[RMDB]
RNA sequence: GGGAACGACUCGAGUAGAGUCGAAAAGGAAGGAAAUUAAGGAAAGGAGGGCCAACCCACACCCGAGCCAAGGAAUCUGGAUUUCCACCUACAUGGAUUGGGCAUACCUGGUACCAAAAGGCAUUAGCAAAGGAAUUAAUCGGUGCCUAGCCGUAAAACUACGGCGUAAUUUCGAUUACGCCGUAGUAAAAGAAACAACAACAACAAC
Reactivity to 2A3 in 0.01 (KOAc 150mM, MgCl2 10mM, bicine 150mM(pH8.5), 24C), signal-to-noise 2, nucleotides 027 to 156: g040g000a040a010g030g010a050a010a070u140u150a160a010g020g020a080a040a060g030g000a000g000g000g000c000c020a000a030c030c000c000a010c000a010c020c040c010g000a000g020c020c010a050a010g040g020a050a020u010c020u150g060g010a060u080u020u130c030c010a070c000c030u110a120c080a100u110g010g000a100u140u090g050g020g000c050a020u070a150c000c030u030g000g000u140a140c050c000a020a040a070a060g030g030c050a020u090u090a000g050c040a040a040a070g020g010a000a050u050u040a120a090u140c050g050g010u020g000c000c050u030a010g060c030c000g000u020a050a060a000
Reactivity to DMS in 0.01 (KOAc 150mM, MgCl2 10mM, bicine 150mM(pH8.5), 24C), signal-to-noise 1, nucleotides 027 to 156: g030g000a050a050g020g010a030a090a140u000u010a080a070g000g000a010a040a180g030g030a080g000g040g030c050c030a060a110c070c020c010a050c060a040c030c000c040g010a120g040c040c020a080a220g080g020a080a040u000c020u000g020g010a210u000u000u000c020c070a180c100c020u000a080c060a180u000g010g000a140u000u000g000g000g030c050a110u000a140c070c000u050g000g010u000a060c010c030a040a030a020a080g000g000c020a040u000u000a090g040c030a010a040a060g000g030a050a000u000u000a100a060u000c090g020g000u000g000c060c030u000a100g010c000c070g000u030a000a030a230

The record gives the reactivity of an RNA of 207 nucleotides to 2A3 and DMS. Reactivities are given for positions 27 through 156. Reactivities are rounded to 0.1 and cut off at 0 and 3. It was measured as part of the RMDB library OK3TST. For DMS, 1,398 sequencing reads were counted. DMS adducts were read by reverse transcription with MarathonRT.